[RMDB]
RNA sequence: GGGAACGACUCGAGUAGAGUCGAAAAGAUAUGGAUAAGCGUGAACUACGCUCGUGUUCGGAAACGAACAUACGAGCGCACGUAGUUAUCCUAAGUCAAAACUCCUAACGGUUCGCCGUUAGGAGAAGAUGUCUCCAACGUUCGCGUUGGAGACAUCAAAAGAAACAACAACAACAAC
Reactivity to 2A3 in 0.01 (KOAc 150mM, MgCl2 10mM, bicine 150mM(pH8.5), 24C), signal-to-noise 1, nucleotides 027 to 126: g010a000u050a000u040g010g000a000u020a080a000g000c010g000u030g050a200a220c080u300a160c300g010c010u010c000g020u010g000u000u010c000g000g040a020a060a070c020g000a000a010c000a000u220a060c050g000a000g000c040g000c030a000c000g010u070a100g230u100u060a000u000c000c020u010a100a010g020u000c020a000a000a060a220c000u000c010c010u020a000a000c000g000g170u070u080c300g090c110c000g020u020u020a000g000g000a000g000a000a020
Reactivity to DMS in 0.01 (KOAc 150mM, MgCl2 10mM, bicine 150mM(pH8.5), 24C), signal-to-noise 2, nucleotides 027 to 126: g010a050u000a300u010g000g010a010u000a030a070g010c000g000u010g010a200a100c270u000a300c080g000c000u000c000g000u000g010u000u020c010g030g030a070a080a140c010g010a000a040c000a080u010a080c150g010a000g000c040g030c000a000c010g000u000a200g020u020u000a010u000c000c000u000a080a180g000u010c010a060a060a040a180c010u000c000c000u020a030a010c000g000g030u000u040c300g010c000c000g000u000u000a000g010g010a000g000a030a050
Chemical mapping of a 177-nucleotide RNA with 2A3 and DMS.
The DMS profile rests on 970 reads.
For DMS the reverse transcriptase was MarathonRT.